[RMDB]
RNA sequence: GGGAACGACUCGAGUAGAGUCGAAAAAGAGGCGAGUGACACAGAGGACAGUUUUCAAGGCAUCGAGCCUCUACAACAAACAUUCUGUGACGACAUGUGCGGCAUGAUAGCAAUUCUUGCUCAGCCGCCAUGCCACGUCGUUCGCGACGUGGCAUGGAAAAGAAACAACAACAACAAC
Reactivity to DMS in 0.01 (KOAc 150mM, MgCl2 10mM, bicine 150mM(pH8.5), 24C), signal-to-noise 3, nucleotides 027 to 126: a090g000a090g010g080c060g000a120g030u000g010a220c020a020c100a010g000a000g010g000a170c300a060g070u000u010u000u030c210a090a020g000g020c040a080u050c220g000a220g000c030c000u010c050u030a150c300a060a040c120a100a030a100c100a110u040u010c050u050g010u010g000a110c150g010a090c060a000u000g000u030g000c000g000g000c010a020u000g000a200u060a060g010c000a060a040u020u040c110u040u000g000c040u000c070a070g000c000c000g010
Reactivity to 2A3 in 0.01 (KOAc 150mM, MgCl2 10mM, bicine 150mM(pH8.5), 24C), signal-to-noise 4, nucleotides 027 to 126: a000g080a010g020g060c070g020a040g050u070g070a040c010a000c040a060g040a020g060g010a050c030a020g030u000u020u050u190c070a070a010g030g000c020a050u190c250g090a020g010c000c000u000c020u040a020c010a060a010c010a020a300a010c030a040u060u020c010u000g010u040g020a050c060g070a010c030a090u080g050u150g050c030g040g000c030a110u070g040a150u180a100g010c000a060a100u190u060c080u090u140g000c000u010c050a010g000c000c000g000